[RMDB]
RNA sequence: GGGAACGACUCGAGUAGAGUCGAAAAGAUAUGGACAAAUGCAAACUACUGAACUACUUACAGUACAGUGUGUCGGAAACGACACACUGUACUGGUAAGCAGUAGGACGUAUAUUUGUCCUAAGUCACCCAAUAUGGUUGUUCGCAACCAUAUUGGGAAAAGAAACAACAACAACAAC
Reactivity to DMS in 0.01 (KOAc 150mM, MgCl2 10mM, bicine 150mM(pH8.5), 24C), signal-to-noise 1, nucleotides 027 to 126: g020a050u010a300u000g000g030a010c010a020a000a010u000g000c040a120a300a300c010u000a010c000u000g010a110a030c090u000a300c010u000u010a070c000a000g000u000a010c000a010g010u000g010u000g000u000c010g000g000a060a140a190c000g000a000c000a000c010a000c000u000g000u000a000c000u000g000g030u010a000a000g010c000a000g000u000a040g010g000a140c300g020u010a070u000a120u010u000u000g000u000c000c000u000a010a100g010u000c060a190
Chemical mapping of a 177-nucleotide RNA with DMS. Values cover nucleotides 27 to 126. The RNA was probed in 150 mM KOAc, 10 mM MgCl2 and 150 mM bicine (pH 8.5) at 24 C. The DMS profile rests on 889 reads. For DMS the reverse transcriptase was MarathonRT.